[RMDB]
RNA sequence: GGGAACGACUCGAGUAGAGUCGAAAACUGUCUCACAGUCUCUCACAGACACACUCAGUGUCUCACUGUCAGACAGUGUGAGUGUGUCACACUGACACUGUGACAGUGUCUGACAGUCAGACACACAUAGACAGUGAUCGUUCGCGAUCACUGUCUAAAAAGAAACAACAACAACAAC
Reactivity to 2A3 in 0.01 (KOAc 150mM, MgCl2 10mM, bicine 150mM(pH8.5), 24C), signal-to-noise 2, nucleotides 027 to 126: c000u020g050u030c020u030c070a070c030a010g030u000c030u000c010u050c040a050c050a120g050a050c000a000c010a020c110u170c090a060g030u010g010u010c000u000c000a030c010u000g000u030c010a030g020a050c000a020g050u020g060u030g100a150g040u120g030u010g040u040c000a040c010a010c080u140g000a000c010a000c020u050g020u060g190a010c020a020g120u010g010u020c010u000g000a010c010a000g000u020c000a000g000a010c000a000c000a010c000a060
Reactivity to DMS in 0.01 (KOAc 150mM, MgCl2 10mM, bicine 150mM(pH8.5), 24C), signal-to-noise 2, nucleotides 027 to 126: c050u000g010u010c040u000c180a090c080a090g020u000c030u000c020u020c060a100c150a100g030a060c090a040c080a060c120u000c090a090g010u000g010u000c010u020c150a030c040u000g000u000c060a000g000a060c000a020g000u010g050u000g020a090g020u000g010u010g010u020c030a070c120a090c250u000g010a030c050a060c110u000g000u010g000a030c050a030g000u000g000u000c020u000g020a070c100a050g000u000c130a040g000a010c000a030c030a070c190a060
Conditions: 150 mM KOAc, 10 mM MgCl2 and 150 mM bicine (pH 8.5), 24 C. An RNA of 177 nucleotides, treated with 2A3 and DMS and read out base by base. For DMS, 1,344 sequencing reads were counted. High 2A3 reactivity points to a flexible backbone, as in loops and unpaired stretches. For 2A3 the reverse transcriptase was SuperScript II with manganese. DMS adducts were read by reverse transcription with MarathonRT.